[RMDB]
Annotation
The data come from the RNA Mapping Database (RMDB), library M2RFPK. Structure probing data (2A3) for a 207-nucleotide construct. The 2A3 profile rests on 412 reads.
RNA sequence: GGGAACGACUCGAGUAGAGUCGAAAACAGAGCUAAUGAGCCACAUACCUACCCAAGGUGGAAGCUCCUUCUCUCGCAAUGUGUAACUCAUGAUUCUCAUGACCCCUGGUUGGAGAGAUCCGGACUAUAGACUAGAGGGUGUUCGCACCCUCUAGAAGCUACCUUUUUCGUUCGCGAAAAAGGUAGCAAAAGAAACAACAACAACAAC
Reactivity to 2A3 in 0.01 (KOAc 150mM, MgCl2 10mM, bicine 150mM(pH8.5), 24C), signal-to-noise 1, nucleotides 027 to 156: c020a010g040a060g020c100u240a210a060u050g080a040g000c030c010a070c010a030u200a030c010c000u050a050c020c000c040a010a070g040g000u040g080g000a040a010g000c080u030c000c000u010u000c030u020c000u030c030g090c100a090a050u050g140u030g100u230a030a030c050u030c020a030u020g040a260u300u110c160u040c010a020u060g030a090c000c000c000c100u120g020g010u000u090g030g000a010g000a010g000a050u060c040c060g020g050a000c020u030a070u130a230g090a000c000u000a000g000a000g020g000g000u030g030u030u040c050g040c070a000c000c000c010u000c000u000a010g000a000a000